The record gives the reactivity of an RNA of 207 nucleotides to DMS and 2A3. The reactions ran in a buffer of 150 mM KOAc, 10 mM MgCl2 and 150 mM bicine (pH 8.5), at 24 C. DMS adducts were read by reverse transcription with MarathonRT. Source: RMDB library M2RFPK, as collected in RNAgym. For DMS, 3,127 sequencing reads were counted.
[RMDB]
RNA sequence: GGGAACGACUCGAGUAGAGUCGAAAACCUAUCCAAAAUGAGAUCCCAUCUUUCACACUGUGCUAAUUUGAGAUUCUCAUGCCUCCUACUUGGAGAGAUCUGGACUAGAAGUCAGGGCAUCUGACUCAAUACAUUCGUCAGUUCGCUGACGAAUGAACACAGAUAUCUCCUUCGGGAGAUAUCUGUGAAAAGAAACAACAACAACAAC
Reactivity to DMS in 0.01 (KOAc 150mM, MgCl2 10mM, bicine 150mM(pH8.5), 24C), signal-to-noise 2, nucleotides 027 to 156: c050c020u000a090u030c020c020a000a090a120a130u000g000a040g010a070u000c000c000c010a030u000c090u000u000u030c030a050c030a160c140u020g030u020g020c050u000a050a030u000u000u000g020a030g000a020u000u000c000u000c000a030u000g000c070c040u000c010c010u000a130c200u000u000g030g000a040g030a110g000a080u000c080u000g000g000a140c150u000a120g000a050a060g020u010c020a030g010g010g050c140a110u000c010u030g010a040c020u000c040a100a130u000a160c000a050u000u000c020g000u000c000a030g010u010u000c300g010c000u000g000a020c000g010a000a000u000g000a080a210
Reactivity to 2A3 in 0.01 (KOAc 150mM, MgCl2 10mM, bicine 150mM(pH8.5), 24C), signal-to-noise 5, nucleotides 027 to 156: c000c000u020a060u020c010c010a000a040a020a100u020g010a010g000a010u010c000c000c000a010u010c020u000u050u030c020a060c060a090c170u300g040u050g050c070u060a030a060u000u010u040g040a050g000a020u300u070c000u000c010a000u050g030c000c000u000c000c000u120a300c090u170u240g020g000a020g000a010g010a040u020c050u100g010g020a010c020u030a060g050a150a010g070u000c000a010g010g090g180c090a130u120c060u000g000a000c000u000c030a030a080u090a100c000a000u000u000c000g000u000c000a000g020u030u120c180g010c130u000g000a010c000g010a000a000u000g000a020a010